[RMDB]
Chemical mapping of a 177-nucleotide RNA with DMS and 2A3. For DMS, 5,615 sequencing reads were counted. Reactivities are given for positions 27 through 126.
RNA sequence: GGGAACGACUCGAGUAGAGUCGAAAAUAUGGGCGGUUCGUACUAAGAAAGUGCACUCGUUUUACCGCCCGCCCGGAACGCAGACCAGCGUGAAAGUCCCGGCAUCUUUUAGCGCUUUUCCAAUGUCCCUAAUGAGUCAUUUCGAUGACUCAUUAGGAAAAGAAACAACAACAACAAC
Reactivity to DMS in 0.01 (KOAc 150mM, MgCl2 10mM, bicine 150mM(pH8.5), 24C), signal-to-noise 5, nucleotides 027 to 126: u010a110u000g010g000g020c010g000g010u000u010c190g010u010a030c040u010a110a180g010a100a120a070g020u010g000c040a190c160u010c170g000u010u020u020u000a030c010c020g010c060c000c020g000c020c010c010g010g000a110a020c020g000c050a060g010a120c130c060a070g010c020g020u000g010a080a090a140g000u000c020c020c040g010g010c050a050u000c020u000u010u000u010a070g010c080g010c030u000u000u000u000c020c030a090a130u000g000u000c070
Reactivity to 2A3 in 0.01 (KOAc 150mM, MgCl2 10mM, bicine 150mM(pH8.5), 24C), signal-to-noise 1, nucleotides 027 to 126: u220a120u060g000g000g000c020g000g000u050u150c050g010u040a020c020u050a150a140g130a300a210a020g100u030g010c020a030c080u120c100g080u080u090u110u140a010c000c000g010c000c000c000g000c000c000c010g010g060a060a010c020g000c030a020g040a180c030c010a010g010c010g020u030g030a090a060a020g040u000c020c020c000g010g020c010a060u050c030u030u080u030u070a040g020c010g010c000u020u050u030u030c020c010a090a090u160g090u120c010